[RMDB]
An RNA of 207 nucleotides, treated with 2A3 and read out base by base.
For 2A3 the reverse transcriptase was SuperScript II with manganese.
The 2A3 profile rests on 689 reads.

RNA sequence: GGGAACGACUCGAGUAGAGUCGAAAAGAAAGCAUGCGAUUACGACCGCCUGGAUGGGAAAGCAUGCCUAGGAUGGGAAAGCAUGCCAAGCGUAGAACCGUACGGAAACCAUCCUUACGUACGGAAACCAUCCUGGCGUGCAUGCGAAAGGAUGGGGCCGUUUCACCGCAUUCGUGCGGUGAAACGGAAAAGAAACAACAACAACAAC
Reactivity to 2A3 in 0.01 (KOAc 150mM, MgCl2 10mM, bicine 150mM(pH8.5), 24C), signal-to-noise 1, nucleotides 027 to 156: g110a040a050a000g000c000a030u010g000c010g190a140u300u150a140c150g070a070c090c000g010c000c000u010g000g000a020u010g010g000g070a040a070a040g010c000a010u010g000c020c000u200a110g050g000a140u230g100g000g180a040a040a000g000c000a000u000g010c030c010a090a040g000c120g060u090a040g050a120a110c010c000g000u000a000c010g020g030a000a030a030c000c000a000u000c000c030u000u060a020c000g000u020a000c000g020g000a010a010a000c000c000a000u000c000c000u010g000g000c000g000u020g010c000a000u000g000c000g040a100a020a000g000g000a000u010g000g000g000g000